[RMDB]
RNA sequence: GGGAACGACUCGAGUAGAGUCGAAAAUGCAAUGCAUGAUGACAUGAACUUACAGAACAGAGAGAAGGGAGGCUCCAUGUUUAUUUAAAGAGGAAAUUUUUAUUUUCUGGUUACCUACUUUUACAUGUGACCACUGUGUUUUCGAACACAGUGGUCAAAAAGAAACAACAACAACAAC
Reactivity to 2A3 in 0.01 (KOAc 150mM, MgCl2 10mM, bicine 150mM(pH8.5), 24C), signal-to-noise 2, nucleotides 027 to 126: u030g000c030a060a060u070g000c000a050u040g050a100u130g040a020c000a050u030g060a110a000c000u060u110a110c000a090g150a110a000c020a030g040a000g000a020g050a060a020g110g010g000a000g000g020c000u000c030c000a000u000g020u000u110u090a160u030u140u160a070a030a010g070a060g000g000a000a000a070u070u100u100u060u180a170u090u050u090u090c040u020g100g000u070u040a110c020c000u010a070c030u130u040u000u080a070c000a040u050g020
Reactivity to DMS in 0.01 (KOAc 150mM, MgCl2 10mM, bicine 150mM(pH8.5), 24C), signal-to-noise 1, nucleotides 027 to 126: u030g010c080a140a160u000g020c000a030u020g000a060u010g010a060c140a070u030g030a020a150c080u000u030a080c050a090g030a120a100c020a070g000a120g000a060g000a070a040g000g000g000a030g000g000c010u030c110c090a040u000g000u000u000u010a090u020u010u040a030a040a100g000a090g000g000a000a030a050u010u040u060u060u120a020u000u000u010u030c130u060g040g000u000u000a050c060c040u000a160c070u000u030u000u080a060c090a030u010g000

Record summary: An RNA of 177 nucleotides, treated with 2A3 and DMS and read out base by base. The RNA was probed in 150 mM KOAc, 10 mM MgCl2 and 150 mM bicine (pH 8.5) at 24 C. Reactivities are given for positions 27 through 126.